[RMDB]
RNA sequence: GGGAACGACUCGAGUAGAGUCGAAAAGACCUUUUCCAGUCUGGCAGCUACACCGUUAGAAACCUUGCGUUUGGUGAUUAUGGGCAUAACAUUGGCAAUGCCCUUUUCUCAUGCUUGGUUGCUGUCUAGAAUCAAAGAUGUUCGCAUCUUUGAUUCUAAAAGAAACAACAACAACAAC
Reactivity to DMS in 0.01 (KOAc 150mM, MgCl2 10mM, bicine 150mM(pH8.5), 24C), signal-to-noise 3, nucleotides 027 to 126: g000a080c030c020u000u000u010u000c020c040a260g000u010c020u000g040g000c020a040g020c020u000a100c110a160c120c100g010u010u020a120g010a110a060a030c010c000u010u000g010c010g020u010u000u010g040g010u000g000a020u000u000a010u020g020g010g010c020a010u000a070a120c080a270u000u010g020g030c180a110a030u000g000c000c000c010u000u000u000u000c010u000c010a030u010g000c000u000u000g000g010u010u000g010c020u000g010u000c040u000
Reactivity to 2A3 in 0.01 (KOAc 150mM, MgCl2 10mM, bicine 150mM(pH8.5), 24C), signal-to-noise 3, nucleotides 027 to 126: g040a010c010c000u050u030u060u040c020c000a020g030u000c020u050g020g020c010a010g010c010u070a050c090a060c070c060g100u070u100a070g070a060a040a000c000c010u000u000g010c020g090u060u090u130g100g050u080g010a010u020u040a110u240g000g000g000c010a000u040a120a050c040a190u090u290g160g000c120a060a000u030g000c000c000c000u020u000u000u000c000u000c010a000u020g000c010u000u010g000g010u010u030g010c000u020g010u000c030u020

Conditions: 150 mM KOAc, 10 mM MgCl2 and 150 mM bicine (pH 8.5), 24 C.
This 177-nucleotide RNA was probed chemically with DMS and 2A3.
For 2A3, 3,136 sequencing reads were counted.
2A3 is a SHAPE reagent: it acylates the 2'-hydroxyl of flexible nucleotides of all four kinds.